[RMDB]
RNA sequence: GGGAACGACUCGAGUAGAGUCGAAAAGCUUGUAGCUUCGGCUACAAGCAUCAAAAAUCAGCGGUAAAUAAUUACGAGGCGUUACCGCUGAACGCCUCGAUACAACCACAUCAUUCGUGAUGUGGAACCUGUUUAUCUAGUUCGCUAGAUAAACAGGAAAAGAAACAACAACAACAAC
Reactivity to DMS in 0.01 (KOAc 150mM, MgCl2 10mM, bicine 150mM(pH8.5), 24C), signal-to-noise 6, nucleotides 027 to 126: g010c000u000u010g010u000a000g010c000u000u010c210g030g010c000u000a010c010a000a010g010c000a030u010c060a030a080a070a090a090u000c010a000g000c000g010g010u010a030a030a040u010a040a050u000u010a130c060g000a010g000g010c010g000u000u000a080c030c010g000c000u000g000a010a020c010g000c010c000u010c000g010a180u010a070c220a100a160c000c000a000c000a000u000c000a040u000u010c230g020u010g000a010u000g010u000g000g010a020a060
Reactivity to 2A3 in 0.01 (KOAc 150mM, MgCl2 10mM, bicine 150mM(pH8.5), 24C), signal-to-noise 9, nucleotides 027 to 126: g000c000u000u000g000u000a000g000c010u040u050c300g110g000c000u000a000c000a000a000g000c000a010u030c010a000a120a010a000a010u030c000a010g030c010g190g180u280a080a080a050u120a060a110u200u160a110c060g000a000g000g000c010g000u000u020a140c000c000g000c000u000g000a000a000c000g000c000c000u000c000g000a000u050a160c070a060a050c010c000a000c000a000u000c000a010u020u140c190g120u030g010a000u000g000u000g000g000a000a010

This 177-nucleotide RNA was probed chemically with DMS and 2A3. For 2A3, 26,630 sequencing reads were counted. It was measured as part of the RMDB library M2PK50. The RNA was probed in 150 mM KOAc, 10 mM MgCl2 and 150 mM bicine (pH 8.5) at 24 C. For DMS, 9,109 sequencing reads were counted.